[RMDB]
This 177-nucleotide RNA was probed chemically with DMS and 2A3. Conditions: 150 mM KOAc, 10 mM MgCl2 and 150 mM bicine (pH 8.5), 24 C. The data come from the RNA Mapping Database (RMDB), library OK1LIB. For 2A3, 429 sequencing reads were counted. The DMS profile rests on 2,272 reads. DMS adducts were read by reverse transcription with MarathonRT.

RNA sequence: GGGAACGACUCGAGUAGAGUCGAAAACGUUUAAUACUUGCCGAUGAAAUGAGGAGCGCCGAUGAGUUCGCAGUGAACUGAGCAGCACGCUUCGUUAUGUUUGUUGUGACUACGUAAGGCAGCCAGGUCAUCAUGGACGUUUCGACGUCCAUGAUGAAAAAGAAACAACAACAACAAC
Reactivity to DMS in 0.01 (KOAc 150mM, MgCl2 10mM, bicine 150mM(pH8.5), 24C), signal-to-noise 2, nucleotides 027 to 126: c120g000u050u020u010a130a050u020a050c090u020u000g000c000c020g000a080u060g010a150a090a010u040g000a000g030g020a110g020c040g000c140c010g000a030u000g000a120g030u000u000c070g050c230a100g010u060g020a010a020c010u000g000a050g000c040a160g010c100a080c100g000c040u000u020c030g030u020u020a020u020g020u000u030u010g000u000u010g000u000g000a130c020u000a080c090g000u020a040a120g000g000c020a060g000c040c000a050g000g000
Reactivity to 2A3 in 0.01 (KOAc 150mM, MgCl2 10mM, bicine 150mM(pH8.5), 24C), signal-to-noise 1, nucleotides 027 to 126: c000g000u010u070u160a280a200u230a170c020u020u020g140c000c000g120a140u170g010a040a000a150u160g010a200g040g000a110g000c040g000c000c000g040a030u030g000a020g100u000u150c000g030c100a040g000u000g100a020a020c000u010g070a000g040c060a000g080c000a010c060g000c000u080u040c030g000u130u000a240u190g110u000u030u040g000u040u000g000u000g040a040c000u060a040c050g040u040a040a000g020g020c000a000g000c000c000a010g040g000

Reactivities are given for positions 27 through 126. DMS (dimethyl sulfate) methylates the pairing face of unpaired adenines and cytosines.